[RMDB]
RNA sequence: GGGAACGACUCGAGUAGAGUCGAAAACGUUGUCAUCGACAACACCCUAUGCAUUCAUGCUCUGUCAGGAUGCGCCGAAAGGUGAGCAAGCCCGAGUUGCCCAGACCUGAAAUGCAACACUUUAGAGAAAACCCGAAGCAGUUCGCUGCUUCGGGAACAUUCUUUAUAACUUCGGUUAUAAAGAAUGAAAAGAAACAACAACAACAAC
Reactivity to 2A3 in 0.01 (KOAc 150mM, MgCl2 10mM, bicine 150mM(pH8.5), 24C), signal-to-noise 5, nucleotides 027 to 156: c070g000u000u000g020u010c100a230u130c300g020a010c010a010a010c000a070c000c000c020u070a110u080g010c000a010u010u010c020a030u060g020c050u030c030u080g160u090c010a040g010g010a030u020g020c000g010c000c000g060a110a050a020g010g010u070g050a080g040c030a050a060g050c010c020c010g090a090g090u110u110g100c040c040c000a020g010a040c010c000u040g020a070a060a040u040g010c010a010a090c050a040c070u140u220u210a130g030a010g040a100a100a040a030c020c010c000g000a000a000g000c000a010g010u070u140c180g020c150u000g000c000u000u000c000g000g000g000a000a000
Reactivity to DMS in 0.01 (KOAc 150mM, MgCl2 10mM, bicine 150mM(pH8.5), 24C), signal-to-noise 2, nucleotides 027 to 156: c040g030u000u010g010u010c040a240u000c090g010a140c020a070a040c020a110c020c010c020u020a080u000g040c020a070u000u010c030a130u010g000c010u000c070u050g020u010c130a090g000g010a100u010g010c040g000c050c050g000a080a090a100g030g010u010g020a140g020c060a090a190g010c020c000c060g010a200g000u000u010g000c030c050c040a160g010a110c020c020u000g010a040a080a080u000g020c040a020a080c040a150c060u000u010u010a080g010a210g000a110a050a110a150c000c000c000g010a040a020g000c000a040g030u000u000c270g010c010u000g020c000u000u010c000g000g010g010a000a010
Overview: An RNA of 207 nucleotides, treated with 2A3 and DMS and read out base by base. The RNA was probed in 150 mM KOAc, 10 mM MgCl2 and 150 mM bicine (pH 8.5) at 24 C. DMS adducts were read by reverse transcription with MarathonRT. 2A3 adducts were read by reverse transcription with SuperScript II with manganese. Values are in units of 0.01, from 0 to 300, in steps of 10. 2A3 is a SHAPE reagent: it acylates the 2'-hydroxyl of flexible nucleotides of all four kinds.